[RMDB]
RNA sequence: GGGAACGACUCGAGUAGAGUCGAAAACGUUCUACGACUUCAGUGAGGAGCGAUAUCGCUUUAUCGAGAACGGAACGCGAAUACGAAACCCAGAUGUGGAUAGUACGCGCUUUUCGGACCAAGACCAACAGUUCUUAAUUGAACCACAGUCGGGAGACUCAUCAGAGCUAUUCGUAGCUCUGAUGAGAAAAGAAACAACAACAACAAC
Reactivity to DMS in 0.01 (KOAc 150mM, MgCl2 10mM, bicine 150mM(pH8.5), 24C), signal-to-noise 2, nucleotides 027 to 156: c010g030u010u010c010u000a050c040g000a080c100u010u020c080a200g010u000g020a130g000g020a040g010c000g040a220u020a090u000c010g010c030u020u000u010a130u020c000g030a180g000a100a160c000g000g030a020a010c050g020c000g000a050a070u000a050c000g020a190a070a050c010c020c000a130g010a220u010g010u010g010g030a050u000a160g000u000a030c110g020c030g020c040u020u000u020u000c010g000g000a170c030c010a080a130g010a290c050c050a060a070c080a070g000u010u000c000u000u010a140a230u000u000g000a000a020c010c070a070c060a180g000u000c050g030g020g020a080g000a160
Reactivity to 2A3 in 0.01 (KOAc 150mM, MgCl2 10mM, bicine 150mM(pH8.5), 24C), signal-to-noise 5, nucleotides 027 to 156: c020g030u030u010c020u090a130c010g100a070c050u140u110c130a100g020u040g150a090g010g040a060g040c040g140a210u120a100u300c060g010c040u060u120u050a130u090c050g020a040g010a100a020c020g010g030a010a010c030g010c010g030a050a020u040a020c000g020a060a150a110c020c000c020a120g060a300u210g130u250g030g020a020u010a070g010u030a030c010g010c010g000c000u030u020u040u090c050g020g020a030c010c030a080a040g050a100c030c010a030a050c020a070g010u020u000c000u040u110a270a270u220u080g000a010a000c000c010a050c030a080g050u030c000g000g010g020a060g040a050
Structure probing data (DMS and 2A3) for a 207-nucleotide construct. Values cover nucleotides 27 to 156. DMS adducts were read by reverse transcription with MarathonRT. The RNA was probed in 150 mM KOAc, 10 mM MgCl2 and 150 mM bicine (pH 8.5) at 24 C.